This 177-nucleotide RNA was probed chemically with DMS and 2A3.
The reactions ran in a buffer of 150 mM KOAc, 10 mM MgCl2 and 150 mM bicine (pH 8.5), at 24 C.
[RMDB]
RNA sequence: GGGAACGACUCGAGUAGAGUCGAAAAAUUAAUUUUGAGCCUACGCAUAUUUUUUACCGCAUUUGGGUUACCAAAUAACAGGCGCAAAUAUUUACUUGAUACGCGGCUCGGAAAAGUGUGUCAUGAAGUAUUAGCAUCGGUUCGCCGAUGCUAAUACAAAAGAAACAACAACAACAAC
Reactivity to DMS in 0.01 (KOAc 150mM, MgCl2 10mM, bicine 150mM(pH8.5), 24C), signal-to-noise 2, nucleotides 027 to 126: a030u040u000a020a050u010u000u000u060g000a020g030c020c010u000a080c130g000c140a120u010a000u000u020u000u040u010u040a220c210c040g050c080a050u010u000u050g000g020g000u040u130a080c000c060a010a000a050u010a050a080c110a050g010g000c040g000c030a000a050a050u000a000u010u020u020a110c190u010u000g000a070u020a060c110g000c240g000g000c090u000c070g010g020a010a050a110a070g010u000g010u000g020u030c030a050u020g010a080a200
Reactivity to 2A3 in 0.01 (KOAc 150mM, MgCl2 10mM, bicine 150mM(pH8.5), 24C), signal-to-noise 4, nucleotides 027 to 126: a000u140u150a010a120u040u030u000u100g060a010g030c000c020u070a060c070g020c050a040u010a270u080u090u000u070u050u100a120c050c050g060c100a100u010u040u120g020g000g020u050u140a180c020c010a000a010a000u080a020a070c050a060g040g000c010g010c060a000a040a000u110a070u070u140u040a120c020u010u070g000a000u010a050c030g000c040g060g060c020u080c110g010g020a080a110a060a070g030u020g000u010g000u040c030a050u090g050a120a060

Source: RMDB library OK1LIB, as collected in RNAgym.